An RNA of 177 nucleotides, treated with DMS and 2A3 and read out base by base.
[RMDB]
RNA sequence: GGGAACGACUCGAGUAGAGUCGAAAACUGUUGCGGCUGUUGCGGCUGUUGCGGCUGUUGCGGCUGUUCAGCCUGAGUCACGUCUUCUCCGGAAACAACUUCCGGCACAUCCGGUUCGAAGAGGCUGCAAGAUACUAGUCUUCGGACUAGUAUCUUGAAAAGAAACAACAACAACAAC
Reactivity to DMS in 0.01 (KOAc 150mM, MgCl2 10mM, bicine 150mM(pH8.5), 24C), signal-to-noise 5, nucleotides 027 to 126: c030u000g010u000u000g020c230g010g020c020u010g020u000u010g010c060g010g030c020u000g010u000u010g010c110g010g020c010u000g020u000u010g010c100g010g010c000u000g020u000u000c010a040g010c010c000u000g000a080g010u010c050a120c130g030u000c020u000u000c030u000c010c020g000g000a030a080a130c150a070a110c170u010u010c040c040g000g030c130a030c200a110u000c020c010g000g000u000u010c150g000a050a050g010a060g010g010c050u000g010
Reactivity to 2A3 in 0.01 (KOAc 150mM, MgCl2 10mM, bicine 150mM(pH8.5), 24C), signal-to-noise 2, nucleotides 027 to 126: c020u040g100u180u110g030c050g010g010c010u020g060u150u060g010c010g010g050c030u070g100u250u110g050c090g010g040c010u030g070u160u080g040c000g020g000c010u020g010u030u020c000a030g000c050c010u040g020a010g040u070c060a030c150g100u000c010u030u010c030u020c000c010g000g050a070a170a000c080a040a090c080u160u040c100c040g040g000c040a000c000a060u000c010c000g060g000u150u180c050g000a020a020g030a000g010g030c010u040g000
Record summary
As a SHAPE reagent, 2A3 marks flexible, mostly unpaired nucleotides at the ribose 2'-OH. For 2A3 the reverse transcriptase was SuperScript II with manganese.